[RMDB]
The record gives the reactivity of an RNA of 177 nucleotides to DMS and 2A3. Conditions: 150 mM KOAc, 10 mM MgCl2 and 150 mM bicine (pH 8.5), 24 C. Reactivities are given for positions 27 through 126. The 2A3 profile rests on 1,310 reads. Reactivities are rounded to 0.1 and cut off at 0 and 3. 2A3 adducts were read by reverse transcription with SuperScript II with manganese. Source: RMDB library M2PK90, as collected in RNAgym.
RNA sequence: GGGAACGACUCGAGUAGAGUCGAAAAACAAAGAGCAACACGCGCAGUCACGCAGCCAGAUGGAAUAAUCUGCCAAGAAUAACUAAUGGACGGUAGACUGCGCGAACCACCGACCAAUAGAAAAAAACUCUUCUGAAUAGUUCGCUAUUCAGAAGAGAAAAGAAACAACAACAACAAC
Reactivity to DMS in 0.01 (KOAc 150mM, MgCl2 10mM, bicine 150mM(pH8.5), 24C), signal-to-noise 2, nucleotides 027 to 126: a090c050a070a060a100g000a090g010c020a040a110c080a130c020g020c010g040c010a030g010u000c000a060c080g010c110a140g000c060c010a030g010a210u020g010g010a020a050u000a060a100u000c030u000g000c230c220a040a050g000a060a020u000a060a290c040u010a060a090u000g010g020a080c030g000g000u020a110g000a030c010u000g030c010g010c000g000a000a040c070c060a030c080c050g000a030c050c070a140a080u000a080g030a030a000a040a130a120a050a080
Reactivity to 2A3 in 0.01 (KOAc 150mM, MgCl2 10mM, bicine 150mM(pH8.5), 24C), signal-to-noise 2, nucleotides 027 to 126: a000c040a000a140a000g100a010g070c030a030a040c040a020c060g000c000g010c010a010g020u010c000a010c040g000c020a030g000c020c000a000g010a080u280g050g060a080a090u100a050a040u030c010u090g070c090c030a110a030g020a070a050u120a050a030c040u030a040a020u000g030g040a010c010g000g000u050a030g000a000c000u000g020c060g000c000g000a000a010c000c010a000c000c010g060a030c020c000a080a040u240a270g130a040a050a020a020a010a040a050